[RMDB]
RNA sequence: GGGAACGACUCGAGUAGAGUCGAAAAGGGAUUGGUAGAAAAGAGCGAGCCUCCCGAUACGAGUUUGCCAGGACCUAUCAAGUUUGGAGUCAUCCGGCCCACAGGGGAGAAUAGACCACCGGGGGGUGAACGUAAUAAUCUUCGGAUUAUUACGUUCAAAAGAAACAACAACAACAAC
Reactivity to DMS in 0.01 (KOAc 150mM, MgCl2 10mM, bicine 150mM(pH8.5), 24C), signal-to-noise 4, nucleotides 027 to 126: g010g000g010a120u000u000g010g000u020a070g010a080a050a110a080g010a060g020c080g010a140g010c040c020u000c010c020c010g010a120u010a080c130g010a100g000u000u000u000g010c060c040a050g010g010a130c050c030u010a070u010c090a050a080g010u010u010u000g030g000a100g020u010c140a060u000c030c030g000g000c000c010c030a080c180a070g000g000g000g010a100g000a060a060u000a110g000a090c040c040a040c070c010g010g000g000g010g000g030u000
Reactivity to 2A3 in 0.01 (KOAc 150mM, MgCl2 10mM, bicine 150mM(pH8.5), 24C), signal-to-noise 1, nucleotides 027 to 126: g080g010g030a070u070u090g030g030u070a110g060a030a130a060a010g070a030g070c040g020a040g020c010c010u010c020c000c000g010a020u070a060c080g000a060g090u040u070u100g040c000c030a020g060g000a070c010c000u050a060u170c050a110a050g040u070u180u160g070g000a010g030u010c000a070u050c030c050g050g010c000c000c020a050c060a020g020g040g010g000a070g030a000a080u110a050g030a020c020c000a010c050c010g000g020g010g000g000g000u030